[RMDB]
RNA sequence: GGGAACGACUCGAGUAGAGUCGAAAAUGAGGUUCGCCUCAGCACAUUCCUAAGUCGUUGUGGAGAUAUUAAAUGGAGCGAAGAACUAUCGGAAACGAUAGGGAGCUCCAUGAUAUCGUUGAAACAACGAUAUGGAGACUUUCUUCUUCGGAAGAAAUAAAUUUGUCAAGUUCGCUUGACAAAUUUAAAAAGAAACAACAACAACAAC
Reactivity to 2A3 in 0.01 (KOAc 150mM, MgCl2 10mM, bicine 150mM(pH8.5), 24C), signal-to-noise 4, nucleotides 027 to 156: u070g010a010g000g030u070u130c200g090c060c000u000c000a000g050c080a060c010a150u080u090c010c000u050a190a050g030u000c000g000u000u000g010u010g030g010a030g000a020u000a010u020u100a180a220a090u000g000g010a000g010c020g110a300a020g010a090a050c000u010a000u010c010g010g060a090a070a060c010g000a000u000a000g010g000g000a000g000c000u010c000c000a000u000g000a000u000a000u000c010g030u060u060g030a020a020a000c000a000a000c000g010a000u020a030u040g000g000a040g040a050c050u050u040u020c000u000u020c000u020u060c190g090g010a010a000g020a030a020a000
Reactivity to DMS in 0.01 (KOAc 150mM, MgCl2 10mM, bicine 150mM(pH8.5), 24C), signal-to-noise 3, nucleotides 027 to 156: u000g000a020g030g020u000u000c190g040c000c000u000c000a050g000c100a120c120a230u000u010c000c000u000a130a300g010u000c010g020u000u000g010u010g000g010a300g010a040u000a030u020u000a030a100a080u000g010g020a020g010c000g000a110a160g020a090a150c000u000a000u000c000g000g000a220a150a280c000g000a010u000a020g020g010g010a260g000c010u000c010c000a000u000g010a050u000a000u000c020g010u010u010g010a300a180a100c010a010a020c000g020a010u000a110u000g000g000a160g000a120c100u000u000u000c000u000u010c010u000u000c300g000g010a030a040g010a020a060a210

The record gives the reactivity of an RNA of 207 nucleotides to 2A3 and DMS. The 2A3 profile rests on 3,399 reads. The reactions ran in a buffer of 150 mM KOAc, 10 mM MgCl2 and 150 mM bicine (pH 8.5), at 24 C. DMS adducts were read by reverse transcription with MarathonRT. 2A3 adducts were read by reverse transcription with SuperScript II with manganese. The DMS profile rests on 6,423 reads.